The record gives the reactivity of an RNA of 177 nucleotides to DMS and 2A3.
The data come from the RNA Mapping Database (RMDB), library TTRDEL.
Reactivities are given for positions 27 through 126.
[RMDB]
RNA sequence: GGGAACGACUCGAGUAGAGUCGAAAAGAUAUGGAGAAGAUCGAUAAGAUGCUAUCGGAAACGAUAGGCAUCUUUUGACGAUCCUCCUAAGUCAGCGGACAACUAGAUGUUCGCAUCUAGUUGUCAAGCUACUUGGGAGCUUCGGCUCCCAAGUAGCAAAAGAAACAACAACAACAAC
Reactivity to DMS in 0.01 (KOAc 150mM, MgCl2 10mM, bicine 150mM(pH8.5), 24C), signal-to-noise 2, nucleotides 027 to 126: g000a030u010a300u000g000g000a010g010a150a090g000a010u000c000g000a180u000a000a010g040a010u000g040c000u000a000u010c000g000g000a110a100a190c010g000a020u010a010g030g020c000a010u000c000u000u000u000u000g030a230c090g060a010u000c000c000u000c000c020u000a020a080g000u010c090a130g020c110g010g020a020c000a010a000c000u000a030g000a000u000g010u000u000c270g000c020a000u000c000u000a010g000u000u000g010u010c010a040a030
Reactivity to 2A3 in 0.01 (KOAc 150mM, MgCl2 10mM, bicine 150mM(pH8.5), 24C), signal-to-noise 2, nucleotides 027 to 126: g040a030u100a040u160g040g010a030g040a300a100g010a040u000c030g000a020u080a160a040g000a000u000g020c010u000a000u020c010g010g020a040a050a020c040g000a000u030a050g300g000c010a000u000c000u020u020u040u030g090a050c010g030a060u000c020c000u020c000c000u010a090a020g050u020c040a010g120c090g210g010a000c010a000a000c000u000a000g000a030u020g020u130u130c300g040c090a000u010c000u000a010g000u000u000g000u010c000a000a020